About this RNA
An RNA of 177 nucleotides, treated with 2A3 and DMS and read out base by base. The data come from the RNA Mapping Database (RMDB), library M2PK50. The DMS profile rests on 1,753 reads.
RNA sequence: GGGAACGACUCGAGUAGAGUCGAAAAAGUUUAGAUUUCGAUCUAAACUAGACCACUAAGAGGAUGACGAGUGAGUACGACGCAUCUAGUAGAAUGCGCCCAGCUGUGAGCAGUUCGCUGCUCACAAAUGCUGUCAAAUCUUCGGAUUUGACAGCAUAAAAGAAACAACAACAACAAC
Reactivity to 2A3 in 0.01 (KOAc 150mM, MgCl2 10mM, bicine 150mM(pH8.5), 24C), signal-to-noise 2, nucleotides 027 to 126: a000g010u020u000u000a020g000a010u130u010u090c220g090a020u000c000u010a010a000a000c000u000a000g030a050c020c010a010c060u060a130a020g070a050g190g020a050u110g020a060c020g020a030g050u060g060a050g020u110a070c090g000a010c000g040c010a020u000c010u020a020g050u030a020g030a160a050u020g000c010g040c010c010c000a010g050c070u090g000u010g000a000g030c010a000g000u000u100c200g070c050u010g020c000u020c000a000c000a000a010
Reactivity to DMS in 0.01 (KOAc 150mM, MgCl2 10mM, bicine 150mM(pH8.5), 24C), signal-to-noise 3, nucleotides 027 to 126: a000g000u030u000u030a020g010a030u010u000u030c240g010a000u000c010u000a000a000a010c000u010a080g010a200c020c010a100c120u020a070a080g020a120g000g000a060u000g020a100c110g010a100g000u010g000a090g000u000a070c060g010a090c060g080c010a010u000c020u010a110g000u010a130g000a020a030u000g010c050g000c020c020c060a140g010c150u010g010u000g000a040g010c010a000g010u000u010c270g020c000u000g000c000u010c000a000c010a000a020